Chemical mapping of a 177-nucleotide RNA with DMS and 2A3. The RNA was probed in 150 mM KOAc, 10 mM MgCl2 and 150 mM bicine (pH 8.5) at 24 C. For DMS the reverse transcriptase was MarathonRT. For 2A3 the reverse transcriptase was SuperScript II with manganese.

RNA sequence: GGGAACGACUCGAGUAGAGUCGAAAAUUCAGUAGUCCUUUUAGAUGAAAUUGAAAAAGCACAUCCGGAUGUAUUUAAUAUGUUGCUACAAGUACUGGAUGAUGGACGUUUGACUGAUUCUAAAGGAAAUUACCAUGCAUUUCGAUGCAUGGUAAUUAAAAGAAACAACAACAACAAC
Reactivity to DMS in 0.01 (KOAc 150mM, MgCl2 10mM, bicine 150mM(pH8.5), 24C), signal-to-noise 6, nucleotides 027 to 126: u010u000c050a120g010u010a160g010u000c010c010u000u000u010u000a000g020a020u000g010a180a070a070u010u000g000a040a030a050a240a280g010c030a070c010a000u000c010c010g010g010a140u010g000u000a010u000u020u000a100a120u010a080u010g010u010u010g020c170u000a030c070a040a070g000u000a070c010u010g010g000a020u000g010a080u000g010g000a130c200g000u000u000u000g000a040c040u000g000a170u000u000c000u000a010a010a010g000g000a040
Reactivity to 2A3 in 0.01 (KOAc 150mM, MgCl2 10mM, bicine 150mM(pH8.5), 24C), signal-to-noise 3, nucleotides 027 to 126: u040u010c010a020g140u090a040g080u120c010c020u030u040u050u050a010g000a020u020g010a010a060a050u060u060g030a010a000a030a030a050g040c020a000c000a020u010c010c000g110g050a040u080g030u050a040u010u150u120a140a090u160a140u280g180u140u180g070c030u030a020c050a120a050g060u040a070c020u050g010g020a010u030g010a030u020g040g050a030c050g020u000u020u010g020a010c000u020g000a010u020u000c000u000a020a000a000g010g000a040